Chemical mapping of a 207-nucleotide RNA with 2A3. 2A3 is a SHAPE reagent: it acylates the 2'-hydroxyl of flexible nucleotides of all four kinds. The reactions ran in a buffer of 150 mM KOAc, 10 mM MgCl2 and 150 mM bicine (pH 8.5), at 24 C.
RNA sequence: GGGAACGACUCGAGUAGAGUCGAAAAUCACUCGAACGAUCACGAGAACACGUGAUCACGAUCACACGUGUUCUCACGAGUACGAUCACGAUCGUGUGUACUCGUACGAGAGAACUCACACGAGAUCACGAUCGAGUGUGAGAGAUCACGUACACACACGACUCCGCCAAUUCGUUGGCGGAGUCGUAAAAGAAACAACAACAACAAC
Reactivity to 2A3 in 0.01 (KOAc 150mM, MgCl2 10mM, bicine 150mM(pH8.5), 24C), signal-to-noise 2, nucleotides 027 to 156: u060c000a050c010u000c020g000a190a080c070g060a090u080c110a020c250g000a000g000a030a010c000a000c000g000u060g080a150u100c070a020c030g060a140u110c050a020c000a010c090g000u000g000u000u000c000u020c000a020c040g000a000g010u090a120c060g040a040u110c080a060c100g050a060u050c070g020u020g020u000g030u040a020c060u060c230g000u020a030c040g000a010g000a000g000a110a010c000u000c000a000c000a000c030g010a000g000a010u030c080a050c210g060a010u010c000g000a030g010u000g010u000g000a010g000a000g010a010u050c010a000c030g000u020a000c000a000c000a000c010